An RNA of 177 nucleotides, treated with 2A3 and read out base by base. The data come from the RNA Mapping Database (RMDB), library M2PK50. The RNA was probed in 150 mM KOAc, 10 mM MgCl2 and 150 mM bicine (pH 8.5) at 24 C. 2A3 adducts were read by reverse transcription with SuperScript II with manganese. Values cover nucleotides 27 to 126.
RNA sequence: GGGAACGACUCGAGUAGAGUCGAAAAGAGUUUCUGUUCGCAGAAACUCAGUGCGUAGCUGCGUUAAAAUAAUAGCUACGCAUAAUAAAUUUUUUUAACGCAAAAGUGGUUAUUUCGAUAACCACAACUCAUUCAUGUUCUUCGGAACAUGAAUGAGAAAAGAAACAACAACAACAAC
Reactivity to 2A3 in 0.01 (KOAc 150mM, MgCl2 10mM, bicine 150mM(pH8.5), 24C), signal-to-noise 1, nucleotides 027 to 126: g010a010g000u000u010u000c000u010g050u070u060c260g010c050a010g000a000a010a000c000u010c000a010g010u000g000c010g030u000a000g020c050u070g000c000g040u050u060a050a060a090a090u190a160a160u140a220g020c000u000a000c000g000c010a010u010a000a000u010a010a030a000u050u100u000u000u030u000u100a010a010c010g000c020a000a060a050a060g000u000g020g020u010u000a010u000u090u120c200g040a050u000a000a010c010c000a000c010a010a010